An RNA of 177 nucleotides, treated with DMS and 2A3 and read out base by base. The 2A3 profile rests on 2,512 reads. The reactions ran in a buffer of 150 mM KOAc, 10 mM MgCl2 and 150 mM bicine (pH 8.5), at 24 C. For DMS, 975 sequencing reads were counted.
[RMDB]
RNA sequence: GGGAACGACUCGAGUAGAGUCGAAAAGAUAUGGACAUAUGCUCCCUGUAUUCGUUGAAAUCGGAAACGAUGGAGAAUACCUGGAGUCAGAAAUAUGUCCUAAGUCAAAGUGUAGUUCGCUACACAAGAUCAGACAGUGGUUCGCCACUGUCUGAUCAAAAGAAACAACAACAACAAC
Reactivity to DMS in 0.01 (KOAc 150mM, MgCl2 10mM, bicine 150mM(pH8.5), 24C), signal-to-noise 1, nucleotides 027 to 126: g000a000u000a300u000g000g010a000c000a020u000a030u000g010c020u000c000c000c020u000g000u000a000u000u000c000g010u000u000g000a100a050a000u000c000g020g000a100a090a190c010g020a020u000g020g000a100g000a040a010u000a000c000c040u000g010g010a010g010u000c200a070g050a110a100a110u020a020u000g000u010c000c000u000a020a100g010u000c030a060a070a080g000u000g000u000a020g010u010u000c300g000c000u010a040c010a000c020a080a120
Reactivity to 2A3 in 0.01 (KOAc 150mM, MgCl2 10mM, bicine 150mM(pH8.5), 24C), signal-to-noise 1, nucleotides 027 to 126: g030a010u080a080u090g010g000a010c010a000u000a000u030g000c010u000c010c020c000u000g000u010a020u000u030c080g190u280u080g000a050a010a000u000c020g020g040a010a040a030c020g000a000u010g000g010a010g020a010a010u010a000c030c020u000g010g000a000g000u080c010a020g300a050a260a000u050a010u000g000u010c000c000u030a120a030g010u030c050a070a030a110g020u040g000u010a030g030u050u080c300g020c090u010a010c000a000c010a020a020